Chemical mapping of a 177-nucleotide RNA with 2A3 and DMS. In probing experiments dimethyl sulfate is read out at A N1 and C N3, which are open when not base-paired. The RNA was probed in 150 mM KOAc, 10 mM MgCl2 and 150 mM bicine (pH 8.5) at 24 C. 2A3 adducts were read by reverse transcription with SuperScript II with manganese. The DMS profile rests on 2,077 reads.
RNA sequence: GGGAACGACUCGAGUAGAGUCGAAAACUAUUUAUAGACAGAACAGUGGAAAACGUAUAUCGCUAUAAACCUUACACACCGAGUCUUCCAGUCGUACAAUUCCACAUAGGCGAGGCAUAAGCGAAAGCGAGGUAAAUCACUUCGGUGAUUUACCUCGAAAAGAAACAACAACAACAAC
Reactivity to 2A3 in 0.01 (KOAc 150mM, MgCl2 10mM, bicine 150mM(pH8.5), 24C), signal-to-noise 3, nucleotides 027 to 126: c000u020a030u040u080u000a090u090a020g060a070c070a050g080a170a060c050a050g060u030g090g070a110a120a000a010c010g010u020a070u040a010u150c020g000c030u020a010u030a130a080a040c020c020u100u120a030c180a030c000a010c070c030g040a000g020u040c000u070u000c000c000a020g070u030c020g000u000a030c000a070a080u090u010c010c010a030c040a050u050a010g030g020c060g020a000g000g040c030a060u100a130a040g000c010g050a080a000a000g030
Reactivity to DMS in 0.01 (KOAc 150mM, MgCl2 10mM, bicine 150mM(pH8.5), 24C), signal-to-noise 2, nucleotides 027 to 126: c080u020a110u020u010u010a060u060a060g030a070c040a150g020a070a040c020a140g000u000g020g000a040a030a140a110c100g010u010a110u010a080u000c060g090c020u040a040u000a040a130a140c110c060u000u000a040c110a060c050a010c080c010g000a110g010u000c010u000u000c000c000a060g000u000c040g000u000a130c120a070a110u020u000c000c000a000c170a100u020a010g000g000c040g000a060g020g000c080a010u040a100a030g000c080g050a070a050a040g050